[RMDB]
The record gives the reactivity of an RNA of 207 nucleotides to 2A3. For 2A3 the reverse transcriptase was SuperScript II with manganese. It was measured as part of the RMDB library RNAMAK. For 2A3, 2,014 sequencing reads were counted.
RNA sequence: GGGAACGACUCGAGUAGAGUCGAAAAACCUUUGUGUCCUAGGGAGAUCCCGAUGGGAACGGCGCUCAUGGACCCAUUGGGUCCAUGAGGCGUUAUCAGAAAUUCACGGGAUCAUCGAUCUAGGACACUCUGGUAAACACCAAUCUUCGGAUUGGUGGGAAUAUGAGGUGUUCGCACCUCAUAUUCCAAAAGAAACAACAACAACAAC
Reactivity to 2A3 in 0.01 (KOAc 150mM, MgCl2 10mM, bicine 150mM(pH8.5), 24C), signal-to-noise 3, nucleotides 027 to 156: a010c000c020u010u030u020g000u000g010u000c000c010u000a000g000g020g030a040g010a010u020c030c000c030g220a300u050g010g010g030a040a020c030g040g030c090g000c010u020c010a010u000g000g010a020c040c000c090a250u170u300g010g000g000u000c020c000a000u010g000a000g000g000c010g000u020u050a120u130c050a020g200a080a120a060u160u090c010a010c030g010g000g000a010u000c010a020u230c020g050a040u050c000u000a000g000g020a000c000a000c000u000c000u000g000g000u040a100a010a010c000a000c000c000a000a000u010c010u020u080c250g090g000a010u000u000g000g000u010g030